[RMDB]
RNA sequence: GGGAACGACUCGAGUAGAGUCGAAAAUCAUGCUCCUCGCUUACUAGAACUCUUGCCCCAUAUAACUUACACGUGUUUUGUAUGAAUGAAAGGGCGUAAGUUAUGUCACCUGAUAUGGAUGGAACGGUGCCAGAGAUAUAAAAAAUAUGGGGAUUACCUCACUGGCAAUUUUCGAAUUGCCAGUGAGAAAAGAAACAACAACAACAAC
Reactivity to 2A3 in 0.01 (KOAc 150mM, MgCl2 10mM, bicine 150mM(pH8.5), 24C), signal-to-noise 2, nucleotides 027 to 156: u070c030a020u110g050c020u000c020c000u020c040g010c080u110u120a090c080u120a130g120a200a090c020u030c010u030u100g020c050c000c000c000a010u020a000u000a020a010c020u020u040a010c040a000c040g090u110g150u120u070u090u080g100u110a130u180g180a190a030u130g020a090a070a020g090g010g010c000g000u000a000a040g000u000u040a040u050g030u040c020a010c030c010u070g060a120u070a070u300g180g040a030u010g020g040a060a050c040g030g030u010g010c010c000a010g020a000g000a040u020a010u100a230a050a010a000a000a000u130a080u100g000g000g010g000a010u030u070a020c000
Reactivity to DMS in 0.01 (KOAc 150mM, MgCl2 10mM, bicine 150mM(pH8.5), 24C), signal-to-noise 1, nucleotides 027 to 156: u000c060a160u000g040c010u030c000c000u000c010g000c080u000u000a090c050u010a050g030a090a110c010u010c050u000u030g020c030c000c000c010a040u030a020u000a020a000c030u000u000a010c010a060c030g010u010g010u000u000u010u010g020u000a200u010g000a150a080u000g010a030a100a170g050g040g040c010g010u000a030a010g010u030u000a050u010g020u000c000a060c040c010u000g010a230u010a040u000g010g010a220u000g010g000a120a160c030g040g000u000g000c020c010a020g030a170g010a140u000a090u060a000a040a110a070a070a110u000a050u000g000g010g010g000a210u000u000a060c150